[RMDB]
RNA sequence: GGGAACGACUCGAGUAGAGUCGAAAAAAACUGCUGUUAGUAAGCUUCUAGAUACAUGUUUUGAAGCUACAGAAGCAACAUUUAACUUCUUGUUAGAUUUGGCAGGAUUGUUCAGAAUCUUUCUCCGCGAGAAUGGACUUCGGUCCAUUCAAAAGAAACAACAACAACAAC
Reactivity to DMS in 0.01 (KOAc 150mM, MgCl2 10mM, bicine 150mM(pH8.5), 24C), signal-to-noise 6, nucleotides 027 to 129: a060a030a050c120u030g010c050u000g010u040u050a080g000u020a040a060g020c020u020u010c010u000a030g040a030u060a100c270a090u080g030u000u000u000u000g000a050a030g010c010u020a010c030a080g030a150a040g000c070a020a040c180a080u020u020u010a020a010c040u000u040c120u060u000g010u010u010a060g040a070u000u000u000g010g030c000a010g000g000a070u030u030g010u000u000c130a110g020a080a080u020c060u010u050u030c030u000c010c030g060c080g020a150
Reactivity to 2A3 in 0.01 (KOAc 150mM, MgCl2 10mM, bicine 150mM(pH8.5), 24C), signal-to-noise 9, nucleotides 027 to 129: a000a000a000c040u020g010c000u020g020u120u050a060g010u040a150a050g000c000u010u000c030u030a030g010a090u150a140c160a070u300g070u040u040u010u070g020a010a000g000c010u010a000c000a020g090a080a000g030c010a000a030c050a060u080u080u050a020a030c010u050u070c040u070u140g030u060u050a070g020a270u120u070u100g020g000c000a000g030g020a090u060u110g050u090u060c030a010g030a110a080u040c050u010u020u000c050u000c010c040g080c030g010a090
This 170-nucleotide RNA was probed chemically with DMS and 2A3.
The DMS profile rests on 29,537 reads.
The data come from the RNA Mapping Database (RMDB), library 15KLIB.